[RMDB]
RNA sequence: GGGAACGACUCGAGUAGAGUCGAAAAAAAAAGGACGACGACGACAGGAACAGCAGCAGCAGCUGACUAACGCACAACAGCAUACGACAGCAAGGAGGUGGAAGGUAACUAACACAACACAAAAAAACACAUUCAUUAAGUUCGCUUAAUGAAUGUGAAAAGAAACAACAACAACAAC
Reactivity to 2A3 in 0.01 (KOAc 150mM, MgCl2 10mM, bicine 150mM(pH8.5), 24C), signal-to-noise 2, nucleotides 027 to 126: a000a000a000a000a000g060g020a030c030g020a010c010g000a010c020g010a020c020a030g050g040a090a020c000a000g030c010a000g030c000a020g000c000a000g000c020u020g010a060c010u030a060a010c060g030c020a020c020a070a110c010a040g020c010a030u050a120c070g060a020c030a010g020c020a040a040g030g020a040g000g040u050g000g030a040a000g040g000u030a050a030c010u040a070a000c070a000c010a070a050c050a030c100a070a120a030a020a020a010a000
Reactivity to DMS in 0.01 (KOAc 150mM, MgCl2 10mM, bicine 150mM(pH8.5), 24C), signal-to-noise 4, nucleotides 027 to 126: a030a080a040a070a070g010g000a040c060g020a070c090g010a080c060g000a060c090a050g000g020a060a050c090a030g000c050a030g010c060a040g010c100a060g000c020u000g000a070c080u010a080a050c130g000c040a060c060a030a060c100a060g000c050a050u010a090c110g000a070c070a040g020c040a040a070g000g010a040g010g010u000g010g010a040a040g000g010u010a050a050c080u010a020a080c100a040c080a010a020c100a030c140a010a000a010a060a040a050a070